[RMDB]
RNA sequence: GGGAACGACUCGAGUAGAGUCGAAAAUGAUCGAGAGAUCUAACGAUGUACGCGAGUCAAUCGCACAGACUCGAGCGAAAGCUCGGUCGAAAGACCGCGUACAUCGGUCGGCAAGUGUCGAGUCAAACGAUAAUGCGGGUUUCGACCCGCAUUAUCGAAAAGAAACAACAACAACAAC
Reactivity to 2A3 in 0.01 (KOAc 150mM, MgCl2 10mM, bicine 150mM(pH8.5), 24C), signal-to-noise 1, nucleotides 027 to 126: u110g000a000u010c010g010a010g020a000g010a110u010c010u040a070a070c030g000a000u000g000u030a000c020g020c000g030a070g050u000c060a020a050u090c080g080c150a130c030a110g020a010c030u090c180g010a000g000c010g040a130a020a000g000c000u000c000g020g000u000c020g000a060a000a020g000a000c000c000g000c000g000u000a000c000a000u000c000g010g040u020c000g000g000c050a300a300g090u080g060u120c000g000a000g000u030c100a160a030a000
Reactivity to DMS in 0.01 (KOAc 150mM, MgCl2 10mM, bicine 150mM(pH8.5), 24C), signal-to-noise 1, nucleotides 027 to 126: u030g010a020u010c030g020a220g000a200g020a000u000c000u010a110a090c000g010a010u010g000u000a000c000g000c010g000a140g010u010c000a030a220u020c040g000c300a110c190a140g000a060c060u000c010g000a000g000c000g000a100a070a250g020c000u000c010g020g000u010c020g010a000a030a290g000a000c000c000g000c010g000u000a000c000a000u000c000g000g000u000c020g010g010c000a080a130g010u000g010u000c000g000a040g030u000c030a100a070a200